[RMDB]
RNA sequence: GGGAACGACUCGAGUAGAGUCGAAAAGACCGCUGAAUGCGGAAGUACUAGAUCAACUAGAAAGUAGAUUAAUACAAAAGCUACGUCUCGAAACUAGUUGAUCUAGUCCAAUCGAGACGUAGCAAGACGUAAUGGCAUGGUUCGCCAUGCCAUUACGAAAAGAAACAACAACAACAAC
Reactivity to DMS in 0.01 (KOAc 150mM, MgCl2 10mM, bicine 150mM(pH8.5), 24C), signal-to-noise 2, nucleotides 027 to 126: g000a160c030c000g000c000u060g020a150a070u080g050c050g030g010a020a060g000u020a160c090u000a000g000a000u020c020a020a000c020u000a070g000a170a130a120g000u000a130g010a080u010u050a050a070u030a130c140a180a110a070a150g000c000u000a000c020g010u000c000u020c010g040a100a120a120c010u000a010g000u000u000g000a030u000c010u000a000g010u020c050c030a120a190u010c010g020a000g000a020c000g010u000a000g000c000a000a040g030a180
Reactivity to 2A3 in 0.01 (KOAc 150mM, MgCl2 10mM, bicine 150mM(pH8.5), 24C), signal-to-noise 4, nucleotides 027 to 126: g040a010c000c000g000c000u090g230a300a170u300g000c010g020g000a020a010g110u120a100c020u000a000g020a040u010c000a010a010c000u010a020g100a100a130a000g110u120a070g040a180u220u270a150a070u270a160c100a040a110a000a000g020c000u010a010c000g000u010c010u000c000g050a070a070a080c040u020a010g000u000u020g000a000u000c000u000a000g000u010c000c020a010a040u060c020g000a000g000a000c000g000u000a010g030c000a000a000g040a000
An RNA of 177 nucleotides, treated with DMS and 2A3 and read out base by base. It was measured as part of the RMDB library OK1LIB. Values are in units of 0.01, from 0 to 300, in steps of 10. Values cover nucleotides 27 to 126.